Conditions: 150 mM KOAc, 10 mM MgCl2 and 150 mM bicine (pH 8.5), 24 C. This 177-nucleotide RNA was probed chemically with 2A3 and DMS. The 2A3 profile rests on 2,837 reads. It was measured as part of the RMDB library M2PK50. High DMS reactivity at an A or C suggests that its Watson-Crick edge is free.

[RMDB]
RNA sequence: GGGAACGACUCGAGUAGAGUCGAAAAGGAGGAACCUUCGGGUUCCUCCCAUUACCGAGAACCUUGCUCGGUAUAAACAAGGAACCCUUCGAAACAAGGGAAAUAUUCACGUCUUCGGACGUGAAAACAUAACCACUAGCUUCGGCUAGUGGUUAUGAAAAGAAACAACAACAACAAC
Reactivity to 2A3 in 0.01 (KOAc 150mM, MgCl2 10mM, bicine 150mM(pH8.5), 24C), signal-to-noise 2, nucleotides 027 to 126: g020g010a000g000g010a000a000c030c010u050u050c300g070g000g000u010u000c000c000u010c000c000c000a000u000u040a030c000c000g000a010g010a030a090c000c020u030u050g010c000u000c010g000g000u000a010u020a010a010a000c010a020a040g070g000a020a030c000c010c000u120u130c140g170a110a070a030c000a010a000g000g000g010a050a070a000u110a030u000u010c020a010c000g000u000c000u000u110c190g090g000a000c000g000u000g000a000a000a000a000
Reactivity to DMS in 0.01 (KOAc 150mM, MgCl2 10mM, bicine 150mM(pH8.5), 24C), signal-to-noise 3, nucleotides 027 to 126: g000g000a000g020g000a020a000c000c010u020u010c230g010g020g020u000u000c000c000u010c000c000c020a060u020u000a120c010c010g000a020g020a140a180c010c010u010u000g010c010u000c000g000g010u000a020u010a040a080a090c160a090a100g000g020a110a220c000c010c000u000u000c090g000a110a080a150c150a020a000g000g000g000a030a090a090u000a090u000u000c000a000c000g010u000c000u000u010c150g020g010a010c000g020u000g000a010a020a070a180